[RMDB]
RNA sequence: GGGAACGACUCGAGUAGAGUCGAAAAGCGCGCGAGAGGCGGGACGAGUGUUUGUCGUCGUCUUCCAGGACGGCGUGGGCGGAGUCGGGGUGCAUACCGUGGUUCCACGGAGGUACUCUCCGCGCAGCGAGGCUUAUUGUUUCGACAAUAAGCCUCGAAAAGAAACAACAACAACAAC
Reactivity to 2A3 in 0.01 (KOAc 150mM, MgCl2 10mM, bicine 150mM(pH8.5), 24C), signal-to-noise 3, nucleotides 027 to 126: g000c000g000c000g010c110g010a020g010a000g030g030c060g020g030g030a010c030g030a040g030u150g070u040u070u080g100u090c000g000u010c000g000u000c000u230u040c080c030a020g050g000a000c000g000g020c020g000u040g000g000g010c080g000g000a070g050u050c020g000g010g000g000u050g020c010a040u060a080c000c010g030u010g010g070u230u060c100c000a000c000g000g010a010g030g020u030a050c000u000c010u000c000c000g000c000g000c000a000g040
Reactivity to DMS in 0.01 (KOAc 150mM, MgCl2 10mM, bicine 150mM(pH8.5), 24C), signal-to-noise 7, nucleotides 027 to 126: g010c010g030c020g020c160g000a030g000a030g010g000c060g010g010g010a120c070g000a250g020u000g010u000u010u010g010u010c010g020u000c000g000u000c010u000u020c210c270a150g000g000a010c010g020g000c010g020u000g000g000g000c100g000g000a220g010u010c060g000g000g000g010u000g000c090a120u000a060c010c000g010u000g000g010u020u000c120c010a030c010g010g000a080g010g010u000a110c020u000c000u000c010c010g000c010g020c020a080g010